[RMDB]
RNA sequence: GGGAACGACUCGAGUAGAGUCGAAAAUACCGUCUUCUCCCCGACGGUUUGAAUCCAUAGCUUCACGUUGUGUAGCGUAGGUGGAAGGUAUCGUGUGGUGUAUAAACACCACAUAGUCUCUUAGGGGUCAAGCUGAUAAACUUCGGUUUAUCAGCAACUUGAGUUAUGCUUUCGAGCAUAACUCAAGAAAAGAAACAACAACAACAAC
Reactivity to 2A3 in 0.01 (KOAc 150mM, MgCl2 10mM, bicine 150mM(pH8.5), 24C), signal-to-noise 3, nucleotides 027 to 156: u040a000c000c000g020u000c020u210u070c050u080c010c000c000c000g010a010c010g000g030u020u000u130g020a010a030u000c010c010a060u050a060g000c010u060u080c030a030c080g300u300u280g000u090g030u110a010g010c040g060u090a080g010g140u020g020g040a030a040g070g010u120a040u140c050g010u000g000u010g020g000u000g050u020a110u120a250a250a020c010a010c000c000a010c000a000u010a010g010u000c020u000c000u120u130a020g000g020g000g000u050c070a080a020g000c000u000g000a000u000a000a010a000c000u010u040c140g060g010u010u000u000a000u000c000a000g000c000a000a000
Reactivity to DMS in 0.01 (KOAc 150mM, MgCl2 10mM, bicine 150mM(pH8.5), 24C), signal-to-noise 2, nucleotides 027 to 156: u000a080c000c010g020u000c030u020u010c020u000c020c000c010c050g020a040c020g020g020u000u000u020g000a160a090u020c010c030a110u010a210g000c040u020u010c020a060c060g000u000u010g050u000g020u000a040g020c030g020u000a060g020g040u000g040g010a070a070g000g000u000a050u010c090g010u000g030u000g000g060u000g010u000a220u000a190a160a120c010a000c000c000a000c000a000u000a030g000u000c040u000c010u000u000a200g050g020g030g000u010c030a050a180g020c000u010g020a010u000a010a000a000c000u020u010c280g050g010u010u000u000a000u000c030a010g030c010a000a000
This 207-nucleotide RNA was probed chemically with 2A3 and DMS. DMS adducts were read by reverse transcription with MarathonRT. The reactions ran in a buffer of 150 mM KOAc, 10 mM MgCl2 and 150 mM bicine (pH 8.5), at 24 C. It was measured as part of the RMDB library M2RFPK.